[RMDB]
RNA sequence: GGGAACGACUCGAGUAGAGUCGAAAACUCAUAGCUACAGCUGUUACGGCUUCCGUAUCUUUAGCACAGUCUAUUCAAGCUGCGCACACGGUAGACUCCUUAUCAUAUAAUGUUACUAAAGUGAUGGACUGCUACACGGAUUCGUCCGUGUAGCAGUAAAAGAAACAACAACAACAAC
Reactivity to DMS in 0.01 (KOAc 150mM, MgCl2 10mM, bicine 150mM(pH8.5), 24C), signal-to-noise 1, nucleotides 027 to 126: c010u010c020a150u020a090g000c020u000a160c160a000g010c030u000g040u010u000a090c080g000g020c070u010u000c020c060g000u000a030u000c050u000u000u000a030g000c030a070c080a000g010u000c050u000a060u000u000c180a130a190g000c000u000g040c040g050c070a100c050a050c190g000g020u000a050g000a040c090u010c040c020u010u020a030u000c030a050u000a110u010a070a050u000g000u000u020a100c040u000a070a040a130g000u020g000a080u000g000g010
Reactivity to 2A3 in 0.01 (KOAc 150mM, MgCl2 10mM, bicine 150mM(pH8.5), 24C), signal-to-noise 2, nucleotides 027 to 126: c010u020c030a050u070a070g030c040u050a060c060a000g000c020u030g050u100u060a030c020g050g020c010u110u050c020c000g070u080a080u010c000u060u090u070a040g000c030a030c030a100g030u030c010u070a120u130u160c010a080a040g030c040u040g030c040g000c060a030c000a010c020g000g000u030a010g030a080c040u030c000c030u080u170a080u070c060a030u100a020u020a260a150u170g050u080u050a020c010u100a150a050a000g030u020g030a040u020g020g060